[RMDB]
An RNA of 177 nucleotides, treated with 2A3 and DMS and read out base by base. For DMS, 2,899 sequencing reads were counted.
RNA sequence: GGGAACGACUCGAGUAGAGUCGAAAAGAACGCCAAGAGGCGAGACCGAGACCGAUAAUCACGCUAGCUCGGAAAAGUGGAAUAGCGUCAGGAGUCCACUCUCGGAAAAGCCGAAAGAACGGCAGAACCAUGCGUAGUAGUUCGCUACUACGCAUGGAAAAGAAACAACAACAACAAC
Reactivity to 2A3 in 0.01 (KOAc 150mM, MgCl2 10mM, bicine 150mM(pH8.5), 24C), signal-to-noise 4, nucleotides 027 to 126: g000a030a000c030g010c030c020a120a060g070a130g120g010c030g050a020g090a000c000c000g000a000g000a010c030c000g010a010u050a020a070u100c060a030c010g000c020u070a030g040c000u010c060g110g020a200a030a020a060g100u140g040g080a150a180u060a080g030c030g030u090c080a040g050g220a030g060u000c000c010a030c010u000c010u000c000g030g000a080a030a000a000g000c030c020g030a060a040a010g130a080a020c050g010g000c010a010g030a040a010
Reactivity to DMS in 0.01 (KOAc 150mM, MgCl2 10mM, bicine 150mM(pH8.5), 24C), signal-to-noise 3, nucleotides 027 to 126: g010a100a160c060g000c000c020a200a110g010a290g010g000c000g020a080g000a270c010c000g050a010g010a090c080c300g000a080u000a010a130u010c250a040c080g000c010u000a110g000c190u000c000g110g000a100a060a060a100g000u030g000g000a050a030u000a100g000c010g000u050c150a050g000g000a210g000u000c000c080a060c120u000c030u020c000g030g000a040a080a090a180g000c000c000g000a160a250a090g000a060a150c040g010g020c000a030g030a110a150